[RMDB]
RNA sequence: GGGAACGACUCGAGUAGAGUCGAAAAUACAGAUUCGUCUGUAGAGACCGCGUACUACCUCGCGAGGAUCGUGUGGUGGGAGUGGGAUCCCAAAUAGGAUCCCACAUCGAUCACCCACGGGAGCGAGGUAUCGCAACCGUAGCGUUUCGACGCUAAACUUGAGUAACUACUUCGGUAGUUACUCAAGAAAAGAAACAACAACAACAAC
Reactivity to DMS in 0.01 (KOAc 150mM, MgCl2 10mM, bicine 150mM(pH8.5), 24C), signal-to-noise 2, nucleotides 027 to 156: u020a020c000a010g010a050u010u010c300g030u000c020u000g000u000a020g030a190g030a190c050c050g000c010g020u020a140c140u010a020c010c000u000c000g030c000g010a140g020g000a060u020c020g020u000g000u010g040g010u000g000g010g020a090g050u000g010g030g010a030u010c000c000c010a050a170a200u010a060g010g000a010u000c000c000c000a020c000a010u000c050g030a150u020c010a040c000c000c020a020c020g010g010g010a140g040c020g020a030g000g020u000a000u010c010g010c020a100a130c080c040g000u000a060g020c030g000u000u000u000c130g000a070c020g020c030u010a000a090a100
Reactivity to 2A3 in 0.01 (KOAc 150mM, MgCl2 10mM, bicine 150mM(pH8.5), 24C), signal-to-noise 4, nucleotides 027 to 156: u020a010c000a010g020a020u010u170c130g100u020c070u000g010u000a020g000a020g040a100c070c050g020c020g030u050a160c050u000a010c010c000u000c000g010c000g030a220g030g010a020u010c000g010u020g100u300g040g000u000g010g010g010a020g000u000g000g000g000a000u010c020c020c010a130a300a090u230a090g000g000a000u000c000c040c000a000c010a090u110c010g060a040u070c000a000c000c010c000a010c000g000g000g000a000g000c000g000a000g000g000u000a000u010c050g000c000a030a030c030c060g100u040a000g010c000g010u080u120u110c300g110a030c020g000c010u030a090a080a070